[RMDB]
RNA sequence: GGGAACGACUCGAGUAGAGUCGAAAACUCUGCAUAUUCGUAUGCAGAGAAAUAACGGUCGGCUCAUGCAGCUAGUGGAACAUGCUGCUCGACCUUUUGGUAAAAACCGGAGGUUCGCCUCCGGUAAAUCAUGGACCACAUUCGUGUGGUCCAUGAUAAAAGAAACAACAACAACAAC
Reactivity to DMS in 0.01 (KOAc 150mM, MgCl2 10mM, bicine 150mM(pH8.5), 24C), signal-to-noise 1, nucleotides 027 to 126: c000u010c000u000g000c000a000u010a000u000u000c190g000u000a000u000g000c010a020g000a020g010a010a050a050u000a040a120c120g030g020u000c000g030g010c150u020c140a040u020g000c020a030g010c010u000a210g000u000g030g000a050a170c140a060u010g010c020u000g000c000u000c000g000a010c000c000u000u000u000u000g010g000u000a130a040a010a100a070c000c000g020g020a010g000g010u000u000c260g020c000c000u010c000c020g000g000u000a000a030